Description
Chemical mapping of a 177-nucleotide RNA with DMS and 2A3. Conditions: 150 mM KOAc, 10 mM MgCl2 and 150 mM bicine (pH 8.5), 24 C. For 2A3, 6,539 sequencing reads were counted.
[RMDB]
RNA sequence: GGGAACGACUCGAGUAGAGUCGAAAAAUUACGGGGGGCGCAGGUGGAGCUGCGAUCCCUCCGCCCAUCGCGUGCUCUCUCGGUGGCCCAGACGCUGCAAACGGACAGGCGGGCCACCUGCAACGAAAACAUUAAUCCCUUUCGAGGGAUUAAUGUUAAAAGAAACAACAACAACAAC
Reactivity to DMS in 0.01 (KOAc 150mM, MgCl2 10mM, bicine 150mM(pH8.5), 24C), signal-to-noise 5, nucleotides 027 to 126: a080u010u000a190c060g010g010g020g010g010g000c010g020c020a010g010g000u010g030g010a190g010c010u000g000c020g000a080u010c000c010c000u000c010c000g020c010c000c030a180u010c090g000c050g020u010g010c020u010c100u000c080u000c160g010g020u000g000g010c000c000c010a120g020a100c090g000c010u010g010c060a080a100a170c300g000g010a170c010a050g000g000c060g010g000g010c010c000a010c000c000u000g010c050a080a040c060g010a080a070
Reactivity to 2A3 in 0.01 (KOAc 150mM, MgCl2 10mM, bicine 150mM(pH8.5), 24C), signal-to-noise 4, nucleotides 027 to 126: a000u200u160a070c030g010g010g000g000g010g000c000g000c000a000g000g060u160g050g150a080g060c010u010g010c000g020a060u070c010c000c010u010c000c010g030c000c000c000a070u100c060g070c030g060u030g010c010u030c010u010c010u040c170g000g010u000g000g000c000c010c010a080g030a070c140g050c150u040g000c060a180a210a200c080g080g100a100c010a010g030g020c000g010g000g000c000c000a000c000c000u010g010c010a030a030c010g050a110a060